Structure probing data (DMS and 2A3) for a 207-nucleotide construct. The reactions ran in a buffer of 150 mM KOAc, 10 mM MgCl2 and 150 mM bicine (pH 8.5), at 24 C. Source: RMDB library OK3TST, as collected in RNAgym.
RNA sequence: GGGAACGACUCGAGUAGAGUCGAAAAUGUGGCAGAGUGCUUCGUUUGACUAAGAUCAAGAGAAAAGAGAACAAGGCUUUUCCUCAUCAAGUAAAAAUUUCCUGUGUGCUGAUGAGUCAUCUCUGAGGUACACUCUUUGGGAAGAACACUGUGCAUAUAUUUAUCGGCGAUUCGUCGCCGAUAAAUAAAAAGAAACAACAACAACAAC
Reactivity to DMS in 0.01 (KOAc 150mM, MgCl2 10mM, bicine 150mM(pH8.5), 24C), signal-to-noise 1, nucleotides 027 to 156: u000g020u000g020g060c000a130g010a120g030u000g000c040u000u000c020g040u040u010u000g000a150c060u000a070a170g000a100u010c030a050a120g000a190g020a030a060a060a050g010a150g020a100a170c190a090a230g020g020c000u000u000u000u000c020c000u000c020a050u000c000a070a100g000u000a030a040a090a080a100u000u000u000c050c060u010g020u000g010u000g040c000u000g000a220u000g000a040g000u000c170a140u000c020u010c000u010g000a270g010g000u000a050c020a000c040u000c030u000u000u030g020g020g000a080a090g010a110a090c020a070c040u010g000u000g030c020a150u020a120
Reactivity to 2A3 in 0.01 (KOAc 150mM, MgCl2 10mM, bicine 150mM(pH8.5), 24C), signal-to-noise 2, nucleotides 027 to 156: u110g010u040g050g000c020a000g040a020g190u030g010c040u010u040c020g110u070u140u180g050a060c050u050a100a080g040a150u080c120a030a070g080a020g000a050a020a010a010g010a010g030a080a050c040a150a010g120g000c000u040u000u000u020c030c000u030c030a040u020c050a020a060g030u140a030a020a040a190a260u070u060u030c010c030u010g000u000g010u000g040c020u010g000a000u020g000a010g100u190c080a290u130c020u000c000u000g040a000g020g000u030a000c000a000c020u030c010u040u080u090g000g010g010a050a000g030a010a000c010a010c090u090g030u040g040c030a010u120a020